[RMDB]
RNA sequence: GGGAACGACUCGAGUAGAGUCGAAAAGUACAACUUACAAUUGUGGUAAGCGUAUUACCGGUGGAGUUCUUAUGUGUGAUUAAAUACUUGUAUUUUUUCAUAUGUUCCUCCUAUUUAAAACCUGCAUCAACACGAUCUUCUUCGGAAGAUCGUGUUGAAAAGAAACAACAACAACAAC
Reactivity to 2A3 in 0.01 (KOAc 150mM, MgCl2 10mM, bicine 150mM(pH8.5), 24C), signal-to-noise 2, nucleotides 027 to 126: g030u010a060c060a150a060c040u010u030a020c030a140a300u190u160g120u160g190g000u010a020a020g040c020g000u030a010u020u070a060c020c030g080g010u100g000g000a050g000u030u050c040u070u060a000u010g070u000g000u010g010a010u010u010a010a030a000u010a020c070u090u130g080u030a000u000u010u000u000u000u010c000a000u040a010u030g010u000u010c000c000u000c020c000u120a210u080u300u160a080a210a060a080c000c020u020g000c000a040u020
Source information:
Conditions: 150 mM KOAc, 10 mM MgCl2 and 150 mM bicine (pH 8.5), 24 C. The record gives the reactivity of an RNA of 177 nucleotides to 2A3. Source: RMDB library RFM100, as collected in RNAgym. Reactivities are given for positions 27 through 126. For 2A3 the reverse transcriptase was SuperScript II with manganese.